[RMDB]
RNA sequence: GGGAACGACUCGAGUAGAGUCGAAAAUGACCGCGUUAGAGCAGUGCUGGAGCAUGGAUUUCGUUGCUGAUAAUCUGUUCAACGGGCGUCGGGUCAGGGCGCUAACUAUAGUGGAUAAUUUUAGUCGCAUACGGCAUGAUUUCGAUCAUGCCGUAUGAAAAGAAACAACAACAACAAC
Reactivity to DMS in 0.01 (KOAc 150mM, MgCl2 10mM, bicine 150mM(pH8.5), 24C), signal-to-noise 4, nucleotides 027 to 126: u000g000a150c020c020g010c040g010u010u000a140g020a040g020c000a030g020u010g010c180u010g000g000a060g010c050a030u010g000g010a150u000u000u010c090g020u000u000g010c040u010g000a120u010a090a120u000c010u000g020u000u000c040a050a060c050g000g000g020c070g020u000c050g000g000g000u000c090a070g000g000g000c030g010c010u010a030a060c110u000a080u010a070g030u000g000g010a080u020a060a070u000u000u000u000a060g010u000c150g000
Reactivity to 2A3 in 0.01 (KOAc 150mM, MgCl2 10mM, bicine 150mM(pH8.5), 24C), signal-to-noise 3, nucleotides 027 to 126: u070g060a010c000c000g060c010g040u010u060a040g000a010g010c030a010g020u020g100c060u110g050g040a030g000c020a050u080g080g090a160u130u160u170c100g020u090u060g010c020u030g000a100u060a140a050u050c010u010g020u030u050c020a030a020c000g010g040g010c000g030u030c000g040g020g010u030c020a030g000g000g000c020g000c010u020a040a020c010u050a060u050a190g060u050g100g060a060u050a250a120u140u100u060u160a060g050u060c060g000
Chemical mapping of a 177-nucleotide RNA with DMS and 2A3. High DMS reactivity at an A or C suggests that its Watson-Crick edge is free. The reactions ran in a buffer of 150 mM KOAc, 10 mM MgCl2 and 150 mM bicine (pH 8.5), at 24 C. The DMS profile rests on 5,172 reads.